[RMDB]
RNA sequence: GGGAACGACUCGAGUAGAGUCGAAAAAUAAUAAAAGGUUCGAGCAGGUUAACAAGCAUUAAUACUAAAUGUGUUUCAUCGUCUACUUAUUGCUAAUAAAAUUGAUUGUUCAUCAAAAAUGCAAUUCGAUCCAAACUUGGUUCGCCAAGUUUGGAUCAAAAGAAACAACAACAACAAC
Reactivity to 2A3 in 0.01 (KOAc 150mM, MgCl2 10mM, bicine 150mM(pH8.5), 24C), signal-to-noise 2, nucleotides 027 to 126: a000u090a020a030u120a000a170a000a000g130g000u130u050c000g000a030g000c000a000g080g060u050u040a080a080c070a110a000g100c040a000u060u140a020a050u050a120c040u130a140a020a060u070g070u000g000u000u060u060c000a190u040c000g160u010c010u000a040c050u040u070a000u090u080g040c040u100a120a050u070a180a240a040a070u070u120g030a000u120u050g000u020u140c000a040u000c020a020a020a020a020a020u040g000c000a040a070u070u100c040